[RMDB]
RNA sequence: GGGAACGACUCGAGUAGAGUCGAAAACGCAGCACUCCCUCAGCCUGAAACCAAGGAGACGAAAUGAACGUCGUUGAACCCCGCCUGCGUCCGCAGGAAUAUGGCCGUGCCAACUACCUCAAGCGGGAGGUCGAGCAUGCCCGUCGCUAUCUCGUAGCCUAAUUCUAGCCUUCGGGCUAGAAUUAGGAAAAGAAACAACAACAACAAC
Reactivity to 2A3 in 0.01 (KOAc 150mM, MgCl2 10mM, bicine 150mM(pH8.5), 24C), signal-to-noise 1, nucleotides 027 to 156: c040g000c000a030g010c000a010c090u060c040c000c000u050c000a010g000c060c000u120g040a300a050a040c160c080a160a050g050g030a110g080a050c010g000a070a000a290u210g040a190a030c080g000u000c010g050u020u110g040a000a060c000c000c000c020g000c000c000u010g020c000g040u080c090c130g000c010a020g000g120a060a090u130a040u060g020g000c000c000g060u010g020c000c000a000a080c010u010a070c000c000u010c020a250a000g100c090g000g060g000a060g010g000u030c060g000a040g010c000a030u060g060c000c000c000g010u020c040g000c040u030a100u050c130u020c100g000u090a030g030